[RMDB]
An RNA of 207 nucleotides, treated with 2A3 and read out base by base. 2A3 adducts were read by reverse transcription with SuperScript II with manganese. Reactivities are rounded to 0.1 and cut off at 0 and 3. Values cover nucleotides 27 to 156.

RNA sequence: GGGAACGACUCGAGUAGAGUCGAAAAGCUGCGUGAAACCUCGCUGUUUUCUUGGCUAACUUUCAGCGAGGUGAGACAAGGCGGCAAAAAAAAGUUGGGAGCAGCAACGGCAAGCAAAAAAAAAGUUACAAGUUGCGAUGGUUCGCCAUCGCAACAACAUGGUAGACAUCUUCGGAUGUCUACCAUGAAAAGAAACAACAACAACAAC
Reactivity to 2A3 in 0.01 (KOAc 150mM, MgCl2 10mM, bicine 150mM(pH8.5), 24C), signal-to-noise 1, nucleotides 027 to 156: g000c000u020g000c000g070u070g070a160a060a000c010c000u000c000g000c010u000g020u000u020u020u030c100u080u250g180g000c120u010a020a010c020u010u010u000c000a000g000c020g000a040g000g010u010g000a010g000a020c020a100a000g100g000c000g000g000c020a060a030a030a000a010a000a000a030g030u130u050g030g000g010a060g030c010a000g040c010a050a010c010g090g000c010a030a010g010c060a090a040a010a050a050a000a000a000a000g010u010u000a000c020a100a060g000u010u010g000c000g010a000u000g000g050u030u030c120g040c090c000a010u010c020g010c000a000a000c000a000a000